[RMDB]
RNA sequence: GGGAACGACUCGAGUAGAGUCGAAAAUUCAACUUGGAGCUCAUCUGUUACAACUGGUAAGGGUGUGACAAGUUAUUCUUACAAUACAUCCAAUAUGGCUGAAACUUCUAGUGCACAAGUCAGGGUCAGAGCAUAUGACGGAGAAGACUACUCAGCAACCUGUAGUUACCUUCGGGUAACUACAGGUAAAAGAAACAACAACAACAAC
Reactivity to 2A3 in 0.01 (KOAc 150mM, MgCl2 10mM, bicine 150mM(pH8.5), 24C), signal-to-noise 3, nucleotides 027 to 156: u110u040c020a030a010c000u010u000g050g010a010g070c040u030c080a050u010c060u070g190u070u060a060c070a220a140c250u140g020g040u050a010a040g020g030g010u020g010u040g010a020c030a050a020g020u010u050a140u110u110c020u030u090a040c040a050a100u060a190c030a080u040c040c000a010a090u050a060u110g080g010c020u010g030a040a010a040c030u060u000c040u050a100g030u140g080c040a030c040a180a040g020u040c040a060g080g000g020u020c030a000g010a020g020c020a030u030a030u120g030a060c120g020g000a010g000a050a000g020a030c000u010a030c010u060c010a010g030c020a030
Reactivity to DMS in 0.01 (KOAc 150mM, MgCl2 10mM, bicine 150mM(pH8.5), 24C), signal-to-noise 1, nucleotides 027 to 156: u000u010c020a140a090c080u000u000g040g000a100g020c000u000c020a100u000c020u010g020u010u010a150c050a060a050c070u000g110g000u010a110a180g050g040g050u000g040u010g020a060c100a110a090g010u000u000a130u000u000c010u000u000a070c030a080a130u010a030c020a080u010c010c020a040a080u000a050u000g010g000c050u000g000a050a080a050c000u000u010c050u000a160g010u000g000c010a130c130a070a070g000u010c020a080g010g070g010u010c000a030g020a070g090c040a110u000a040u000g000a140c020g000g020a170g070a060a080g000a110c020u000a050c040u000c000a150g030c130a110
This 207-nucleotide RNA was probed chemically with 2A3 and DMS. 2A3 adducts were read by reverse transcription with SuperScript II with manganese.